This 177-nucleotide RNA was probed chemically with 2A3 and DMS. The RNA was probed in 150 mM KOAc, 10 mM MgCl2 and 150 mM bicine (pH 8.5) at 24 C.

RNA sequence: GGGAACGACUCGAGUAGAGUCGAAAACAUCGCCGCGCGUGCGAGAUGGCGGACGUCAUCGUCGUCGAAGGCGUCGGCGGCUUUCGCGUGCCGCUCGCCGACACGCGCGAUACCGCCGAUCUGGCGAGGCUCAGUAUGAUUUCGAUCAUACUGAGCCAAAAGAAACAACAACAACAAC
Reactivity to 2A3 in 0.01 (KOAc 150mM, MgCl2 10mM, bicine 150mM(pH8.5), 24C), signal-to-noise 5, nucleotides 027 to 126: c020a080u100c060g050c090c010g000c010g000c000g030u060g020c050g010a050g020a130u070g020g030c040g060g130a120c110g080u050c020a050u030c010g180u020c000g020u020c030g030a090a050g140g040c050g070u020c020g020g000c010g000g000c010u070u120u070c100g030c050g070u110g130c010c000g000c050u110c040g040c050c000g040a050c000a010c010g000c000g000c000g020a000u030a050c010c000g000c000c010g040a260u070c100u160g010g000c010g040a080
Reactivity to DMS in 0.01 (KOAc 150mM, MgCl2 10mM, bicine 150mM(pH8.5), 24C), signal-to-noise 5, nucleotides 027 to 126: c120a180u000c060g030c050c040g010c070g020c040g010u010g020c030g000a100g010a060u020g000g000c010g020g010a090c190g000u000c140a050u010c030g010u000c040g020u000c030g010a130a170g010g010c100g020u000c040g010g000c000g030g010c290u000u000u000c110g020c060g000u010g020c010c000g000c030u010c090g010c080c000g000a070c010a010c000g010c020g010c030g020a030u010a070c100c000g000c010c010g000a090u000c120u010g020g020c010g000a090